Conditions: 150 mM KOAc, 10 mM MgCl2 and 150 mM bicine (pH 8.5), 24 C. Chemical mapping of a 177-nucleotide RNA with 2A3 and DMS. It was measured as part of the RMDB library OK2TRN. DMS adducts were read by reverse transcription with MarathonRT.

RNA sequence: GGGAACGACUCGAGUAGAGUCGAAAAUAAGUUCCAUAUUUGCAAACCCCGUUUUGAGAGUGUGGAAUUUCAGGUCCAAGGGUUUGCCAUUCUUUGGUGAGGACUAUAGAUGGAGCAACCAAUGCUCUCAAGAGUUGGGAUUCGUCCCAACUCUUGAAAAAGAAACAACAACAACAAC
Reactivity to 2A3 in 0.01 (KOAc 150mM, MgCl2 10mM, bicine 150mM(pH8.5), 24C), signal-to-noise 1, nucleotides 027 to 126: u070a050a000g040u000u000c010c010a020u020a050u050u070u000g000c000a050a000a000c060c170c060c120g090u060u020u020u090g050a090g000a010g000u040g010u060g070g060a030a020u030u170u170c070a090g030g070u000c000c000a000a030g130g010g000u060u170u140g000c000c000a040u150u050c030u070u040u050g020g020u100g090a060g040g040a030c020u040a070u100a150g130a030u110g100g040a080g020c010a020a020c000c010a080a190u060g000c010u020c000
Reactivity to DMS in 0.01 (KOAc 150mM, MgCl2 10mM, bicine 150mM(pH8.5), 24C), signal-to-noise 2, nucleotides 027 to 126: u020a020a080g000u000u010c020c000a020u000a040u000u010u020g010c020a040a010a050c060c160c190c220g000u010u000u000u010g000a140g010a030g010u010g050u000g000g010a020a060u000u010u000c220a100g000g010u000c010c010a100a100g010g020g020u000u000u000g020c010c050a060u000u010c060u000u010u000g020g010u000g010a220g020g000a010c030u010a100u000a050g000a050u000g010g010a060g020c000a050a070c070c060a100a100u000g000c020u010c020